[RMDB]
RNA sequence: GGGAACGACUCGAGUAGAGUCGAAAAUCCUAAGUCUAGCGGGAGUGUUGACGAAGGGUAAGGGAGAUUAUCGGAAACGAUAAUCAUCGAUCUUACCUCGAAACACGAGGAUCGCUAGAUAUGGAAAAACAGUGAAGGGCUUCGGCCCUUCACUGAACACACACUUUCAGUUCGCUGAAAGUGUGUGAAAAGAAACAACAACAACAAC
Reactivity to DMS in 0.01 (KOAc 150mM, MgCl2 10mM, bicine 150mM(pH8.5), 24C), signal-to-noise 2, nucleotides 027 to 156: u000c000c000u010a090a300g020u000c000u000a020g040c030g010g000g020a110g070u020g010u010u000g010a220c100g030a140a050g020g060g020u000a030a060g000g010g020a050g010a010u000u000a000u010c000g020g000a180a060a300c010g040a010u000a010a030u010c000a040u000c140g000a090u030c030u010u000a020c010c000u000c060g010a260a030a010c000a030c020g010a230g030g010a160u010c010g010c030u000a010g000a000u000a090u030g000g000a070a060a130a200a270c010a000g000u010g010a030a040g000g020g040c000u000u000c300g120g030c030c000c010u000u010c000a010c000u020g010a040a180
Reactivity to 2A3 in 0.01 (KOAc 150mM, MgCl2 10mM, bicine 150mM(pH8.5), 24C), signal-to-noise 2, nucleotides 027 to 156: u030c000c010u010a120a010g030u000c000u000a000g000c010g000g010g010a050g010u020g020u030u060g140a290c070g040a220a060g110g000g000u000a000a000g010g010g000a030g000a000u000u000a000u000c010g000g050a080a040a040c010g000a010u000a000a000u000c010a030u300c000g040a030u000c000u000u000a000c000c020u020c010g000a020a030a000c010a010c000g010a240g000g030a030u020c000g000c000u000a000g000a000u050a010u010g000g010a060a070a040a020a000c020a000g030u020g010a000a000g020g020g000c060u150u190c300g080g010c040c000c020u000u000c000a000c000u000g000a000a000

An RNA of 207 nucleotides, treated with DMS and 2A3 and read out base by base. As a SHAPE reagent, 2A3 marks flexible, mostly unpaired nucleotides at the ribose 2'-OH. For DMS the reverse transcriptase was MarathonRT. Reactivities are rounded to 0.1 and cut off at 0 and 3.